[RMDB]
This 207-nucleotide RNA was probed chemically with 2A3 and DMS. It was measured as part of the RMDB library OK3TST. For DMS the reverse transcriptase was MarathonRT. Conditions: 150 mM KOAc, 10 mM MgCl2 and 150 mM bicine (pH 8.5), 24 C. Reactivities are given for positions 27 through 156.

RNA sequence: GGGAACGACUCGAGUAGAGUCGAAAAGAUUAAGUGGGAGCGUCGCCCUGUCGGUGCAUCGGAUAUUAAUUAGCCAGUGCGUGGCAUUACGCAUAUUGAUGUCUACUUUGGCGUAGACUCUGCCAAUUUAAGGAUUGGUGGGCAAUCCAGCCCUAGAAUAUACCUGCGAUUUCGAUCGCAGGUAUAUAAAAGAAACAACAACAACAAC
Reactivity to 2A3 in 0.01 (KOAc 150mM, MgCl2 10mM, bicine 150mM(pH8.5), 24C), signal-to-noise 1, nucleotides 027 to 156: g050a030u120u210a060a020g040u060g010g020g020a070g020c020g020u010c020g040c000c000c050u030g070u090c030g030g030u000g020c000a060u040c120g000g050a030u040a010u110u190a220a070u070u040a070g000c000c030a020g040u010g020c000g000u030g090g000c070a020u050u180a000c020g000c020a010u030a070u080u100g060a060u070g010u000c000u000a000c000u140u150u180g100g000c110g000u000a000g000a000c000u030c000u040g000c000c000a010a010u000u040u050a120a030g100g000a000u000u020g000g000u010g010g010g000c000a000a000u090c040c010a030g010c010c000c000u010a000g050a030
Reactivity to DMS in 0.01 (KOAc 150mM, MgCl2 10mM, bicine 150mM(pH8.5), 24C), signal-to-noise 1, nucleotides 027 to 156: g000a120u000u000a030a100g000u000g000g020g020a110g060c040g020u000c050g000c070c050c040u000g030u000c030g010g010u020g040c060a040u000c030g000g010a070u000a070u000u000a090a160u040u020a120g060c020c020a060g030u000g020c010g010u000g040g050c040a100u010u020a060c120g010c030a110u010a110u020u000g010a020u000g020u010c000u000a020c040u010u000u030g000g020c100g050u000a130g010a030c000u000c010u010g000c020c000a010a020u000u000u000a180a220g000g000a080u000u010g000g050u000g000g010g030c030a050a110u010c050c060a110g000c000c000c000u000a020g010a150